Source information:
Structure probing data (2A3 and DMS) for a 207-nucleotide construct. For 2A3, 1,612 sequencing reads were counted. Values cover nucleotides 27 to 156. 2A3 is a SHAPE reagent: it acylates the 2'-hydroxyl of flexible nucleotides of all four kinds. Conditions: 150 mM KOAc, 10 mM MgCl2 and 150 mM bicine (pH 8.5), 24 C. For DMS, 4,425 sequencing reads were counted. It was measured as part of the RMDB library OK3TST.
RNA sequence: GGGAACGACUCGAGUAGAGUCGAAAACACUAAGGAAAAGUUCAUCAAGUUUGUAAACGAGCUUAUAUGGCACGACAAGAAGGUUGACAUUGAUAACCUAAUGAAGUCAGUUUUUGACAGCAUUAGCAAAUCAGAAAUAGUAUGGACUGAUGACGGAAUCACCAAGGGUAUUCGUACCCUUGGUGAUAAAAGAAACAACAACAACAAC
Reactivity to 2A3 in 0.01 (KOAc 150mM, MgCl2 10mM, bicine 150mM(pH8.5), 24C), signal-to-noise 3, nucleotides 027 to 156: c070a010c120u180a040a090g090g020a120a130a020a070g020u030u010c000a020u010c020a020a100g000u000u040u050g080u140a140a080a040c080g010a020g020c030u130u050a120u080a070u300g050g000c060a020c110g060a040c070a070a060g120a040a010g110g050u080u070g000a060c060a110u010u050g010a010u060a060a020c010c000u000a020a010u010g030a070a010g000u000c010a040g040u120u050u050u240u120g020a000c010a020g020c000a010u000u020a020g000c000a000a150a150u050c010a000g060a030a070a010u080a030g070u050a050u080g010g010a010c020u000g020a040u040g000a020c030g060g080a060
Reactivity to DMS in 0.01 (KOAc 150mM, MgCl2 10mM, bicine 150mM(pH8.5), 24C), signal-to-noise 3, nucleotides 027 to 156: c060a150c070u000a120a100g020g000a060a070a080a100g070u000u000c030a080u000c060a070a120g020u000u010u010g000u000a050a080a160c070g010a110g030c040u000u000a170u000a040u010g030g010c050a130c040g000a180c090a050a080g040a100a080g020g030u000u000g000a080c050a150u000u030g010a070u000a070a200c300c000u000a010a070u000g000a020a080g010u000c010a030g000u000u000u000u000u000g020a040c010a120g020c010a040u000u000a020g020c000a050a180a090u010c020a050g010a050a100a110u000a060g020u000a100u000g010g010a040c020u000g020a070u000g000a120c070g010g020a180